Record summary
Source: RMDB library OK3TST, as collected in RNAgym. An RNA of 207 nucleotides, treated with 2A3 and DMS and read out base by base.

RNA sequence: GGGAACGACUCGAGUAGAGUCGAAAAUUUUAUUAGCGUUUUGGAUGUUGCUGACGCUGAUGUUAAAGCUGCAGAGUCUAAGGCUUUUAUUGAUACCAUUAUUCCAUCUUGUCCUUCUAUUUUGAAAAUAAUAGACGGUGGCAAGAUAUGGAGUGGACCCUCAUAACUAUUUCGAUAGUUAUGAGGGAAAAGAAACAACAACAACAAC
Reactivity to 2A3 in 0.01 (KOAc 150mM, MgCl2 10mM, bicine 150mM(pH8.5), 24C), signal-to-noise 2, nucleotides 027 to 156: u070u080u100u120a060u020u080a030g030c010g000u040u040u130u090g050g030a080u090g010u050u080g020c040u020g010a010c010g010c000u000g020a020u050g030u120u150a050a070a000g010c010u070g030c050a050g030a070g270u030c090u100a090a050g050g000c000u070u080u060u060a090u100u180g020a050u080a270c000c010a010u090u050a110u250u030c000c000a000u000c030u010u010g010u020c000c010u010u010c000u000a020u010u000u040u090g060a140a100a020a000u040a070a030u000a010g010a010c050g040g110u170g070g000c000a000a000g000a000u030a010u060g000g000a000g000u010g010g000a010
Reactivity to DMS in 0.01 (KOAc 150mM, MgCl2 10mM, bicine 150mM(pH8.5), 24C), signal-to-noise 2, nucleotides 027 to 156: u010u000u010u000a060u000u000a130g020c040g000u010u000u000u030g000g000a070u000g000u000u000g020c030u000g010a060c020g020c010u020g000a090u010g020u000u000a020a050a090g030c020u000g020c090a120g020a130g040u000c030u010a060a200g010g000c030u000u000u000u000a120u050u010g010a250u010a140c020c000a160u010u000a050u020u000c010c010a060u000c000u000u000g000u000c010c000u000u000c000u000a010u000u010u020u000g010a170a090a090a090u000a010a010u010a000g000a020c230g020g000u000g030g010c000a000a000g020a050u000a010u000g030g000a070g040u010g010g010a250
Background
Conditions: 150 mM KOAc, 10 mM MgCl2 and 150 mM bicine (pH 8.5), 24 C. 2A3 adducts were read by reverse transcription with SuperScript II with manganese. High DMS reactivity at an A or C suggests that its Watson-Crick edge is free.